[RMDB]
Chemical mapping of a 207-nucleotide RNA with 2A3 and DMS. The 2A3 profile rests on 1,320 reads. The data come from the RNA Mapping Database (RMDB), library OK3TST. 2A3 is a SHAPE reagent: it acylates the 2'-hydroxyl of flexible nucleotides of all four kinds.
RNA sequence: GGGAACGACUCGAGUAGAGUCGAAAAAAAGAUAAGACUAAGGAGGUAGAAUAAAGCAUUAGUCACAGACAGCUCCUGCUUAGGCUCUGAAACCUGUAAGGCAUCUGGAGAAUGCUGGAGUCUGGCUUCCUUGAACUGAGAACAUCAAAGGCAAUGAACGAUAUGCCCUAUUCGUAGGGCAUAUCGUAAAAGAAACAACAACAACAAC
Reactivity to 2A3 in 0.01 (KOAc 150mM, MgCl2 10mM, bicine 150mM(pH8.5), 24C), signal-to-noise 3, nucleotides 027 to 156: a010a020a000g070a050u130a090a040g060a010c110u060a020a000g000g010a000g050g020u060a030g020a100a070u150a210a050a010g010c020a010u080u080a040g080u070c020a030c010a200g050a020c010a050g000c020u060c010c000u010g000c020u100u120a030g040g010c030u030c060u080g020a050a030a040c030c000u030g060u090a040a030g010g000c000a040u000c090u100g030g010a020g000a040a030u010g000c020u040g030g000a030g070u070c010u020g050g060c000u010u010c000c000u000u020g020a060a000c040u050g030a030g020a110a020c040a040u150c070a030a080a060g070g030c050a070a070u270g030a090
Reactivity to DMS in 0.01 (KOAc 150mM, MgCl2 10mM, bicine 150mM(pH8.5), 24C), signal-to-noise 1, nucleotides 027 to 156: a060a130a060g010a050u000a150a040g000a070c040u000a010a030g050g000a030g000g000u000a050g010a060a080u000a090a200a060g000c000a100u010u000a080g030u000c040a120c070a060g010a020c050a100g010c060u000c010c030u000g000c110u000u010a020g010g010c000u000c010u000g020a300a110a100c000c000u000g030u000a060a080g000g030c070a050u010c010u000g000g000a130g000a050a010u000g000c000u000g010g030a180g010u000c010u000g010g000c020u000u010c020c000u010u000g010a020a080c060u000g000a110g010a110a110c050a100u000c070a040a060a060g000g030c040a010a250u000g010a180